The data come from the RNA Mapping Database (RMDB), library OK1LIB. The record gives the reactivity of an RNA of 177 nucleotides to 2A3 and DMS. The reactions ran in a buffer of 150 mM KOAc, 10 mM MgCl2 and 150 mM bicine (pH 8.5), at 24 C.
[RMDB]
RNA sequence: GGGAACGACUCGAGUAGAGUCGAAAAAGAUGCCGCCCGGCGAGGCGUUGCCCAGCGAGCGUCGGUUGGCUGAGUUGCUCGGAGUGUCGCGACCCGCGGUCCGCGAGGCGCUCAAACGGCUGUCGGCCAGUGCGUACCGAUUCGUCGGUACGCACUGAAAAGAAACAACAACAACAAC
Reactivity to 2A3 in 0.01 (KOAc 150mM, MgCl2 10mM, bicine 150mM(pH8.5), 24C), signal-to-noise 4, nucleotides 027 to 126: a010g100a040u120g010c040c010g040c040c020c010g010g030c010g030a070g020g030c030g060u100u080g040c000c000c000a020g010c040g060a020g070c000g020u020c000g040g030u020u110g010g000c060u040g070a090g100u070u140g060c030u020c030g060g010a110g050u110g060u070c050g000c000g120a160c020c010c030g020c020g070g050u020c020c050g020c030g020a120g070g000c020g000c010u040c020a060a090a020c030g000g020c020u010g030u090c020g000g020c010
Reactivity to DMS in 0.01 (KOAc 150mM, MgCl2 10mM, bicine 150mM(pH8.5), 24C), signal-to-noise 2, nucleotides 027 to 126: a000g000a080u030g010c030c000g020c110c060c110g000g000c010g000a020g010g000c020g000u000u010g010c030c000c030a100g000c090g010a020g010c070g000u000c040g020g000u000u010g000g000c000u030g000a070g020u030u010g000c040u000c020g020g000a070g010u000g020u010c070g000c020g010a050c050c030c060g020c080g030g000u010c050c030g030c100g010a050g020g000c000g000c020u000c040a040a110a230c100g000g010c020u000g010u000c050g000g050c080